[RMDB]
RNA sequence: GGGAACGACUCGAGUAGAGUCGAAAACAGAGAGCCAGUCAGAGGGCGCUAUCAUGCAAACUAGGGCUGGCUACUCUAGCACAGAAUCACAUCCCGAUAAUCAACAGUGCUAGAAGGUUGAUUAUACCAAAACCUAGCAUUUCGAUGCUAGGUUUUGAAAAGAAACAACAACAACAAC
Reactivity to 2A3 in 0.01 (KOAc 150mM, MgCl2 10mM, bicine 150mM(pH8.5), 24C), signal-to-noise 7, nucleotides 027 to 126: c050a000g100a000g010a000g050c010c000a000g000u010c010a010g000a020g060g020g020c010g000c010u110a240u300c110a050u300g000c000a010a020a010c000u010a020g000g000g020c000u000g000g000c000u000a000c000u000c000u000a000g020c000a000c010a020g150a110a090u120c030a030c010a140u020c010c000c010g010a030u010a010a020u000c000a000a010c010a010g010u000g010c000u010a010g010a060a010g040g000u000u000g000a020u000u020a020u040a070c040
Reactivity to DMS in 0.01 (KOAc 150mM, MgCl2 10mM, bicine 150mM(pH8.5), 24C), signal-to-noise 6, nucleotides 027 to 126: c170a120g000a020g020a060g000c000c000a010g000u000c000a020g000a020g000g000g010c300g030c000u010a100u080c220a100u050g010c000a030a300a140c000u000a010g000g020g000c000u000g010g000c010u000a010c000u000c000u000a000g000c010a040c010a010g000a160a090u010c090a090c270a100u000c000c000c000g030a040u000a000a010u010c010a010a010c010a030g000u000g000c000u010a010g000a000a020g000g000u000u000g000a010u010u000a020u010a130c280